[RMDB]
RNA sequence: GGGAACGACUCGAGUAGAGUCGAAAAUUGAGGCGGGUGGGUUGUGAGGGCGGGGCUUCCCUUAUUGUUCGGGAGCCUGAACAAUACGCUGUUUCCCGCCCGCAAGAAUUCGAGGCUAGUUGGCCAAAACUCCCGGGACAUUCGUGUCCUGGGGGUUAAAAGAAACAACAACAACAAC
Reactivity to 2A3 in 0.01 (KOAc 150mM, MgCl2 10mM, bicine 150mM(pH8.5), 24C), signal-to-noise 5, nucleotides 027 to 126: u080u100g050a050g030g040c050g040g100g070u190g040g040g060u160u090g080u100g110a140g000g050g050c140g010g010g000g000c010u110u090c000c000c000u040u080a130u050u100g050u040u060c010g030g010g020a040g000c010c000u010g010a020a000c010a000a020u050a030c020g010c050u050g080u050u070u020c010c000c000g000c000c000c010g000c000a020a000g030a030a060u110u110c070g020a040g000g000c030u040a060g120u070u070g030g020c000c000a000a030
Reactivity to DMS in 0.01 (KOAc 150mM, MgCl2 10mM, bicine 150mM(pH8.5), 24C), signal-to-noise 4, nucleotides 027 to 126: u040u030g010a110g020g030c020g030g030g030u050g020g000g030u020u010g010u010g010a070g020g010g000c070g000g020g000g000c030u020u000c010c010c040u010u020a040u020u010g000u000u010c160g010g000g000a070g020c050c000u000g010a040a050c130a040a050u030a100c100g010c050u000g000u010u010u020c000c000c000g020c010c020c010g020c040a020a010g000a090a070u010u000c090g000a120g000g020c020u010a110g020u020u020g010g000c010c030a080a060
Structure probing data (2A3 and DMS) for a 177-nucleotide construct. Reactivities are given for positions 27 through 126. For DMS the reverse transcriptase was MarathonRT. The DMS profile rests on 13,605 reads. The data come from the RNA Mapping Database (RMDB), library OK1LIB.